[RMDB]
Annotation
An RNA of 177 nucleotides, treated with DMS and 2A3 and read out base by base. Values are in units of 0.01, from 0 to 300, in steps of 10. 2A3 adducts were read by reverse transcription with SuperScript II with manganese. Conditions: 150 mM KOAc, 10 mM MgCl2 and 150 mM bicine (pH 8.5), 24 C. It was measured as part of the RMDB library M2PK50.

RNA sequence: GGGAACGACUCGAGUAGAGUCGAAAAUCCCCAUAGUUCGCUAUGGGGAAAAGCCGUACCGCGUAGCACCCGGAUAGGAGCGAAGAUAUCCACGGCACGCGAAAACCUUCGCCUUCGGGCGAAGGAACAGAUAACAGUAGUUCGCUACUGUUAUCUGAAAAGAAACAACAACAACAAC
Reactivity to DMS in 0.01 (KOAc 150mM, MgCl2 10mM, bicine 150mM(pH8.5), 24C), signal-to-noise 8, nucleotides 027 to 126: u010c000c000c000c000a000u000a000g010u000u020c200g020c000u000a000u000g010g000g010g000a010a010a040a100g020c030c020g030u010a090c150c020g010c030g010u000a100g010c070a120c090c060c080g010g000a060u000a050g010g020a090g030c120g000a070a080g000a130u000a030u000c010c010a140c150g000g020c040a020c010g010c020g000a100a060a090a150c000c000u000u000c000g010c000c000u000u010c180g020g010g020c010g010a010a000g000g010a030a060
Reactivity to 2A3 in 0.01 (KOAc 150mM, MgCl2 10mM, bicine 150mM(pH8.5), 24C), signal-to-noise 9, nucleotides 027 to 126: u010c000c000c000c000a000u010a000g020u030u040c220g020c100u000a000u000g000g000g000g020a020a060a010a020g030c000c010g040u100a080c050c050g000c010g010u030a050g040c040a130c050c060c070g020g010a030u060a090g090g070a080g110c090g040a090a020g050a140u080a030u020c010c010a020c020g030g000c010a000c010g010c000g050a040a020a050a110c000c000u000u000c000g000c010c010u030u130c270g090g000g000c000g000a000a000g000g000a000a000